An RNA of 177 nucleotides, treated with DMS and 2A3 and read out base by base. For 2A3 the reverse transcriptase was SuperScript II with manganese. It was measured as part of the RMDB library OK2TST.
RNA sequence: GGGAACGACUCGAGUAGAGUCGAAAAUGCGAGCUGCUAGUUAGGCGGGUGACGAUAGCACCGGCAUCCACGCGUCUAACCGUGGAUUGAAAUUAAAUGAAGUACAGCACCGAAAUCCGUUCGGCCAGAUCCCACUAUACUUCGGUAUAGUGGGAUCAAAAGAAACAACAACAACAAC
Reactivity to DMS in 0.01 (KOAc 150mM, MgCl2 10mM, bicine 150mM(pH8.5), 24C), signal-to-noise 2, nucleotides 027 to 126: u000g040c060g000a090g030c030u000g000c040u000a070g010u010u000a030g010g010c020g000g000g050u000g000a100c110g000a150u000a080g030c050a080c080c070g010g000c070a060u020c000c000a010c000g000c120g020u000c080u030a030a040c210c020g010u000g010g000a010u000u000g000a130a080a090u000u000a060a120a040u010g010a100a090g010u000a020c070a090g000c060a080c020c030g000a030a120a110u000c070c080g010u000u000c020g000g010c170c060a140
Reactivity to 2A3 in 0.01 (KOAc 150mM, MgCl2 10mM, bicine 150mM(pH8.5), 24C), signal-to-noise 2, nucleotides 027 to 126: u100g000c010g040a070g000c000u040g000c040u060a040g010u120u030a040g010g000c000g020g050g000u000g010a070c060g020a070u070a060g020c020a050c050c080g050g010c020a030u040c000c000a000c020g100c020g050u000c070u120a080a100c030c000g000u000g000g000a030u000u080g080a050a020a050u160u150a070a100a140u170g060a060a020g050u060a050c030a060g030c000a030c040c020g050a060a020a000u100c090c060g030u050u030c010g030g030c040c000a020